RNA sequence: GGGAACGACUCGAGUAGAGUCGAAAAAUUAGUGACUUCUGGAGUUACACCUCAAAGGGCUGUUAAGGAAGUUCAGUGACAUUAGUUGGCUUCUGAGGUGCCUAUGGAUUGCAGCUCAUAUGGUAAACAUCCAUUUCGUGUUCGCACGAAAUGGAUGAAAAGAAACAACAACAACAAC
Reactivity to 2A3 in 0.01 (KOAc 150mM, MgCl2 10mM, bicine 150mM(pH8.5), 24C), signal-to-noise 1, nucleotides 027 to 126: a000u150u130a030g070u060g020a030c000u000u060c060u120g100g000a000g040u010u020a020c020a010c030c000u080c060a180a040a000g020g000g000c030u060g020u110u140a040a000g060g000a020a030g030u110u110c010a000g060u000g060a050c030a170u080u250a100g050u040u080g000g000c000u030u070c020u090g000a030g010g020u080g010c020c010u220a230u100g040g000a060u090u250g060c020a030g020c040u020c030a050u160a070u180g060g030u120a010a040a000
Reactivity to DMS in 0.01 (KOAc 150mM, MgCl2 10mM, bicine 150mM(pH8.5), 24C), signal-to-noise 2, nucleotides 027 to 126: a110u010u000a090g010u010g000a070c030u000u010c050u010g020g010a080g020u010u000a070c070a110c040c000u000c130a100a120a100g030g000g000c050u000g010u000u020a100a100g020g000a030a040g030u000u010c050a050g020u000g000a070c100a040u000u000a140g010u000u000g000g000c020u010u000c030u000g010a100g000g020u000g020c020c020u000a080u000g010g000a070u000u000g030c070a040g010c040u000c040a060u000a090u020g000g000u000a090a060a130